[RMDB]
The record gives the reactivity of an RNA of 177 nucleotides to 2A3 and DMS.
The RNA was probed in 150 mM KOAc, 10 mM MgCl2 and 150 mM bicine (pH 8.5) at 24 C.
DMS adducts were read by reverse transcription with MarathonRT.
RNA sequence: GGGAACGACUCGAGUAGAGUCGAAAAUUGUAGUUUUAAGCAAGAUAAAUGCAAAGAUAAGCUGAAUUGCAAGUAAAAUUCCUACAUAUUUCCAGCGAAUAUUUUUCCUGUCUGAGCUAAAUAGAAAACUAUCCCCCUCGUUCGCGAGGGGGAUAGUAAAAGAAACAACAACAACAAC
Reactivity to 2A3 in 0.01 (KOAc 150mM, MgCl2 10mM, bicine 150mM(pH8.5), 24C), signal-to-noise 1, nucleotides 027 to 126: u000u020g000u000a000g000u000u030u060u070a100a020g020c050a120a000g030a080u090a110a170a000u180g010c110a090a060a030g150a150u170a000a010g000c030u000g050a110a000u020u020g000c000a000a010g000u090a050a260a100a040u080u070c090c000u120a020c000a000u060a110u020u020u000c000c000a000g000c010g090a120a000u080a190u100u140u010u000u130c060c030u050g090u040c120u000g010a020g000c050u080a020a000a020u110a050g170a000a000a000
Reactivity to DMS in 0.01 (KOAc 150mM, MgCl2 10mM, bicine 150mM(pH8.5), 24C), signal-to-noise 1, nucleotides 027 to 126: u020u000g040u000a010g030u000u000u070u000a020a270g030c010a100a050g040a160u020a070a160a130u000g050c110a030a100a130g040a050u040a060a090g010c000u000g000a000a050u000u000g000c060a050a100g050u010a100a010a060a240u000u000c070c030u000a120c010a030u000a060u000u000u000c060c010a040g020c040g000a080a020u000a050u000u030u010u000u000c040c000u000g020u030c060u000g010a100g050c110u030a050a120a030u000a030g000a060a070a040